[RMDB]
RNA sequence: GGGAACGACUCGAGUAGAGUCGAAAAAAUAAUUCAAACGUUCUUGGGUUUAUGUCAACAUACGCAGAAAGCGGUUAUUACUCUUGCGGUGAUCUUGCAACAUACUUACCGCCUGAAGCCUCUGGAUGGUGGAUGUUUGAGUUACAUGUACACGGUACUAUUAUAAUAGUUUCGACUAUUAUAAUAGAAAAGAAACAACAACAACAAC
Reactivity to DMS in 0.01 (KOAc 150mM, MgCl2 10mM, bicine 150mM(pH8.5), 24C), signal-to-noise 3, nucleotides 027 to 156: a100a070u000a030a030u000u000c010a040a030a060c020g020u010u000c020u010u010g030g010g020u000u000u000a050u010g020u010c060a080a090c060a060u010a040c060g020c010a080g030a150a060a090g030c030g030g010u010u000a060u010u010a050c030u000c030u000u000g030c010g040g040u010g020a050u000c050u000u010g010c060a070a050c090a110u000a020c090u000u000a030c020c030g020c020c020u000g000a150a140g020c050c050u000c060u000g000g000a140u010g020g040u000g000g020a030u010g000u000u010u010g000a080g010u000u000a020c040a090u000g020u000a130c060a100c060g000g020u000a090
Reactivity to 2A3 in 0.01 (KOAc 150mM, MgCl2 10mM, bicine 150mM(pH8.5), 24C), signal-to-noise 3, nucleotides 027 to 156: a000a000u110a020a020u040u030c040a050a030a010c030g010u030u000c030u090u100g100g000g000u110u180u050a090u120g080u090c010a020a030c020a140u150a080c030g020c070a040g100a110a030a010g030c040g020g020u040u080a090u110u100a080c040u000c000u070u020g000c010g000g040u040g050a040u080c040u090u170g020c030a040a030c000a160u130a050c000u050u020a020c000c010g010c000c020u040g030a040a010g030c020c030u060c080u090g080g030a070u040g040g080u040g020g000a010u010g030u020u000u060g010a000g000u020u030a030c030a080u100g040u090a020c070a010c070g050g040u070a030